[RMDB]
RNA sequence: GGGAACGACUCGAGUAGAGUCGAAAAGUGCUUAGAUCCUUCGGGAUCUAAGCACAAAAACCGUAGGAUCGAUGGCUUCUUUGAUCUUCGAAAGAGGGGAGAAGGUCCAUUCGAUCCUAAACGGAAAAAGAUUGCACCGAUUCGUCGGUGCAAUCAACAACGUUAGUAAGUUCGCUUACUAACGUUGAAAAGAAACAACAACAACAAC
Reactivity to 2A3 in 0.01 (KOAc 150mM, MgCl2 10mM, bicine 150mM(pH8.5), 24C), signal-to-noise 2, nucleotides 027 to 156: g000u000g010c000u000u010a000g000a010u000c010c020u030u130c210g010g000g000a000u000c000u000a000a000g040c010a000c000a000a000a000a000a000c000c010g000u010a010g010g020a000u010c010g000a000u010g040g000c060u170u080c010u030u260u030g050a050u000c020u020u000c020g050a140a100a070g000a000g000g000g020g000a070g000a000a000g010g000u000c000c000a000u050u060c000g000a000u000c000c000u000a000a000a000c000g070g050a220a040a000a030a080g000a000u000u000g000c000a010c010c000g030a030u040u070c210g040u000c000g170g000u000g000c000a000a000u000c000a000a000
Reactivity to DMS in 0.01 (KOAc 150mM, MgCl2 10mM, bicine 150mM(pH8.5), 24C), signal-to-noise 2, nucleotides 027 to 156: g030u000g010c000u000u000a000g010a010u000c000c000u000u000c300g040g030g030a010u000c000u020a010a040g030c020a000c080a030a050a040a090a050c020c010g020u000a030g000g000a010u000c000g000a060u000g000g010c040u000u000c010u000u010u000g000a300u010c010u000u010c030g010a200a110a240g020a040g030g000g000g010a300g000a040a030g010g010u000c020c020a050u000u000c030g030a030u010c000c010u000a020a040a050c040g000g000a010a030a120a110a170g010a040u000u000g030c010a020c000c000g010a060u000u010c300g010u000c010g030g010u000g000c000a010a000u010c000a070a160
Background: Source: RMDB library RNAMAK, as collected in RNAgym. An RNA of 207 nucleotides, treated with 2A3 and DMS and read out base by base. Values cover nucleotides 27 to 156. DMS adducts were read by reverse transcription with MarathonRT. The RNA was probed in 150 mM KOAc, 10 mM MgCl2 and 150 mM bicine (pH 8.5) at 24 C.